[RMDB]
RNA sequence: GGGAACGACUCGAGUAGAGUCGAAAAAUCAUGGCCUUUAUGUCCGGGGCUGCACACGUCCUACAAUGGAACAUACAGACGGCCGCGAACCCGCGAGGGUAAGCUAAUCCGAAAAAGUGUUCCUUAGCGAUCUGACAAUAUUCGUAUUGUCAGAUCGAAAAGAAACAACAACAACAAC
Reactivity to DMS in 0.01 (KOAc 150mM, MgCl2 10mM, bicine 150mM(pH8.5), 24C), signal-to-noise 5, nucleotides 027 to 126: a100u020c150a060u020g000g030c020c000u000u010u050a070u010g010u010c030c030g020g010g020g010c010u020g020c100a040c130a080c130g010u000c020c020u000a070c200a120a080u010g010g010a020a010c010a020u030a090c250a130g040a270c100g000g020c300c150g020c020g010a170a060c020c000c000g000c300g010a170g000g000g000u000a000a180g010c000u000a080a100u030c010c020g020a060a090a080a120a130g000u000g010u000u010c020c000u010u050a060g000
Reactivity to 2A3 in 0.01 (KOAc 150mM, MgCl2 10mM, bicine 150mM(pH8.5), 24C), signal-to-noise 8, nucleotides 027 to 126: a000u140c080a080u110g050g000c000c000u060u100u070a100u100g050u020c020c020g000g000g020g020c020u070g020c040a040c010a010c070g050u020c000c010u080a090c090a060a160u150g010g000a040a000c010a000u090a020c010a040g190a060c010g000g000c030c000g000c000g000a060a110c000c000c000g000c020g030a100g000g000g020u030a020a000g000c010u040a050a050u030c020c010g030a090a050a010a020a030g030u010g010u010u000c000c000u020u040a060g030
Source: RMDB libraries RFM100 and RFMREP, as collected in RNAgym. Chemical mapping of a 177-nucleotide RNA with DMS and 2A3. 2A3 adducts were read by reverse transcription with SuperScript II with manganese. The RNA was probed in 150 mM KOAc, 10 mM MgCl2 and 150 mM bicine (pH 8.5) at 24 C. DMS (dimethyl sulfate) methylates the pairing face of unpaired adenines and cytosines. For DMS the reverse transcriptase was MarathonRT.